[RMDB]
About this RNA:
The data come from the RNA Mapping Database (RMDB), library OK1LIB. The record gives the reactivity of an RNA of 177 nucleotides to DMS and 2A3. The reactions ran in a buffer of 150 mM KOAc, 10 mM MgCl2 and 150 mM bicine (pH 8.5), at 24 C. For DMS the reverse transcriptase was MarathonRT.
RNA sequence: GGGAACGACUCGAGUAGAGUCGAAAAGGGGAGAUUAAAAAAUCAAUUUUAGCUUAUAUCCUUUUAUGCUAAAAUGGUGAUAAGAAAUGAAACAAAUACUAUUUAUAUAAAAGGGGUAAAAAUAUGGGAUAUCGAGUAUAUUCGUAUACUCGAUAUCAAAAGAAACAACAACAACAAC
Reactivity to DMS in 0.01 (KOAc 150mM, MgCl2 10mM, bicine 150mM(pH8.5), 24C), signal-to-noise 2, nucleotides 027 to 126: g000g010g000g010a120g030a110u000u020a000a050a070a040a150a040u010c020a080a030u020u000u000u000a020g010c030u000u010a060u000a120u080c060c120u000u000u010u000a030u000g010c010u000a000a000a000a000u000g010g010u010g000a040u010a090a100g000a030a050a080u010g000a240a040a250c050a090a020a100u070a090c020u000a060u020u010u040a070u100a160u000a020a010a040a030g020g000g000g000u010a010a080a070a080a040u030a020u000g000g020
Reactivity to 2A3 in 0.01 (KOAc 150mM, MgCl2 10mM, bicine 150mM(pH8.5), 24C), signal-to-noise 5, nucleotides 027 to 126: g040g010g060g010a110g010a080u160u260a050a010a080a030a020a020u040c020a010a020u010u000u010u020a000g000c010u050u050a030u050a050u260c020c000u130u040u020u020a060u070g000c010u010a000a010a030a010u030g020g090u100g060a060u080a100a060g060a080a110a030u090g020a080a080a050c040a020a120a060u000a020c010u060a050u240u220u070a240u050a040u100a100a030a010a010g020g030g000g050u070a030a100a060a050a010u140a120u150g070g060